An RNA of 177 nucleotides, treated with DMS and 2A3 and read out base by base. The reactions ran in a buffer of 150 mM KOAc, 10 mM MgCl2 and 150 mM bicine (pH 8.5), at 24 C. It was measured as part of the RMDB libraries RFM100 and RFMREP.
RNA sequence: GGGAACGACUCGAGUAGAGUCGAAAACACAUUUCCUAUCCUGGAAUAUUAGUGCAGACGCAUUGCACUGUUUGGCCCAUCCGUACGCCGCUUCUCCCCUCUCCUCACGGUUGGGGGCUGGAGUGGUCGCACCUUGUAGUUUCGACUACAAGGUGCGAAAAGAAACAACAACAACAAC
Reactivity to DMS in 0.01 (KOAc 150mM, MgCl2 10mM, bicine 150mM(pH8.5), 24C), signal-to-noise 2, nucleotides 027 to 126: c020a090c260a100u040u000u000c000c000u000a080u040c170c070u000g000g000a010a060u000a040u020u040a020g010u000g000c000a030g010a110c210g000c160a020u090u000g000c020a010c030u010g000u040u000u000g000g000c040c000c000a040u060c110c160g000u020a090c150g010c000c020g030c000u020u010c050u000c100c000c000c000u000c050u000c010c000u000c220a160c300g030g040u010u000g060g000g000g000g080c040u000g010g000a010g000u000g010g000u020
Reactivity to 2A3 in 0.01 (KOAc 150mM, MgCl2 10mM, bicine 150mM(pH8.5), 24C), signal-to-noise 3, nucleotides 027 to 126: c060a000c000a040u010u020u030c000c000u020a140u090c040c120u050g000g030a040a020u070a050u210u120a040g010u020g020c020a000g080a250c120g100c220a160u070u040g000c000a000c010u000g020u020u040u060g050g000c000c000c000a010u050c050c110g060u040a020c140g000c000c010g000c000u010u000c000u030c000c000c000c000u000c000u000c000c010u070c010a040c110g000g010u030u010g020g000g020g000g000c040u000g000g000a000g000u010g000g020u000